This 207-nucleotide RNA was probed chemically with DMS and 2A3.
The 2A3 profile rests on 3,632 reads.

RNA sequence: GGGAACGACUCGAGUAGAGUCGAAAAACUGACGGUACGCCGUCAGAACGGUAGAAAAGAUGGUUUGGAAACCACGCCUUCUACCAAUAUAGUAAAUAAAUAGGCGGAGCGGUCAUACGUGACCGCAAAAACAUAUUCAGCUUCGGCUGAAUAUGAACUUAUACUAGCGGUUCGCCGCUAGUAUAAGAAAAGAAACAACAACAACAAC
Reactivity to DMS in 0.01 (KOAc 150mM, MgCl2 10mM, bicine 150mM(pH8.5), 24C), signal-to-noise 1, nucleotides 027 to 156: a060c020u000g020a010c000g040g000u000a120c190g070c020c000g000u000c000a020g070a040a020c130g000g010u010a010g000a040a010a020a010g000a060u000g000g010u000u000u000g000g040a260a110a060c020c010a000c000g000c000c000u000u000c000u010a050c020c000a120a100u010a130u010a110g000u000a080a100a130u000a080a070a160u000a090g020g000c010g020g000a260g020c010g040g000u000c010a120u000a090c110g050u000g000a120c000c050g020c010a000a000a030a060a060c020a000u000a010u000u010c000a020g030c010u000u010c290g040g000c000u000g020a010a010u000a000u000g010a020a050
Reactivity to 2A3 in 0.01 (KOAc 150mM, MgCl2 10mM, bicine 150mM(pH8.5), 24C), signal-to-noise 1, nucleotides 027 to 156: a010c000u000g000a000c000g000g010u050a030c200g050c040c000g000u000c000a000g000a040a000c040g000g000u000a000g000a000a000a020a010g060a300u010g010g040u040u050u140g140g040a090a100a000c000c000a000c000g000c000c000u010u010c000u010a000c000c010a010a000u150a010u050a010g080u030a010a020a150u080a030a070a050u130a030g010g000c010g020g030a000g000c000g000g000u010c010a020u020a150c230g090u040g010a010c000c000g000c000a000a000a000a030a000c000a000u000a000u000u000c000a000g000c010u050u130c200g140g000c000u000g000a000a000u000a000u000g000a020a000